[RMDB]
RNA sequence: GGGAACGACUCGAGUAGAGUCGAAAAGAUAUGGAUCGAUGUCCACUUUUGACGUUUAGUUCGGAAACGAAGAACGAUAAGUGGCAUCGAUCCUAAGUCAAAAGGACCACAGUUCGCUGUGGUCCAACAUGAGAAGGAGGUUCGCCUCCUUCUCAUGAAAAGAAACAACAACAACAAC
Reactivity to DMS in 0.01 (KOAc 150mM, MgCl2 10mM, bicine 150mM(pH8.5), 24C), signal-to-noise 5, nucleotides 027 to 126: g000a020u000a300u010g010g000a010u000c000g010a000u000g000u020c000c000a010c000u000u010u000u010g020a180c110g000u000u000u000a130g010u000u000c000g010g000a080a080a170c010g020a030a070g000a010a000c010g010a120u000a020a040g020u000g000g000c010a000u000c000g000a000u000c000c000u000a000a070g010u000c030a060a060a140a110g000g000a010c000c000a010c000a010g010u000u020c230g020c010u000g000u000g000g000u000c000c000a010a040
Reactivity to 2A3 in 0.01 (KOAc 150mM, MgCl2 10mM, bicine 150mM(pH8.5), 24C), signal-to-noise 3, nucleotides 027 to 126: g010a020u050a030u130g000g010a010u000c010g000a000u010g210u110c010c010a020c040u140u170u100u170g240a090c010g020u020u030u060a280g110u090u130c010g000g010a050a040a030c010g000a020a030g020a040a000c010g020a030u030a240a060g010u010g000g000c000a000u000c000g000a000u000c000c000u000a000a000g020u000c010a010a000a060a190g010g010a000c000c000a000c000a010g010u070u100c230g020c130u000g000u000g000g000u000c000c000a000a000
Structure probing data (DMS and 2A3) for a 177-nucleotide construct. For DMS, 8,784 sequencing reads were counted. Source: RMDB library TTRDEL, as collected in RNAgym. Conditions: 150 mM KOAc, 10 mM MgCl2 and 150 mM bicine (pH 8.5), 24 C. The 2A3 profile rests on 10,849 reads.